[RMDB]
RNA sequence: GGGAACGACUCGAGUAGAGUCGAAAAUCAAUGACAGCACUGGUCAAACCUGGCUGAGCAGCAAACAAAUCGGUGACAUCUAUCCCAUGUGAGUACUUUGCAUCUUGUUUAAAUUGCUUCAGGUCUGGCUUAAUGCCUCGUUCGCGAGGCAUUAAGCAAAAGAAACAACAACAACAAC
Reactivity to DMS in 0.01 (KOAc 150mM, MgCl2 10mM, bicine 150mM(pH8.5), 24C), signal-to-noise 2, nucleotides 027 to 126: u010c090a140a170u000g000a020c090a070g040c080a050c080u000g020g030u000c020a010a010a140c140c000u000g010g000c030u030g000a070g000c030a060g000c180a070a050a050c070a060a000a140u000c160g020g030u000g000a120c050a050u010c010u000a100u010c040c000c000a050u000g010u070g050a100g000u000a010c010u020u000u000g010c000a070u000c080u000u000g020u000u000u010a010a160a110u030u020g070c020u020u000c030a010g010g010u000c050u110g000
Reactivity to 2A3 in 0.01 (KOAc 150mM, MgCl2 10mM, bicine 150mM(pH8.5), 24C), signal-to-noise 3, nucleotides 027 to 126: u120c030a000a020u100g060a070c030a010g040c080a010c220u100g010g020u000c020a030a020a110c000c010u000g020g000c060u020g070a020g000c020a000g000c000a060a010a050c050a000a080a010u110c030g090g000u030g100a020c020a020u060c030u110a130u070c040c000c010a020u100g080u040g040a080g030u030a080c010u020u120u070g010c000a020u000c000u050u030g060u000u080u050a090a210a090u050u090g020c020u050u080c010a010g090g000u010c000u050g010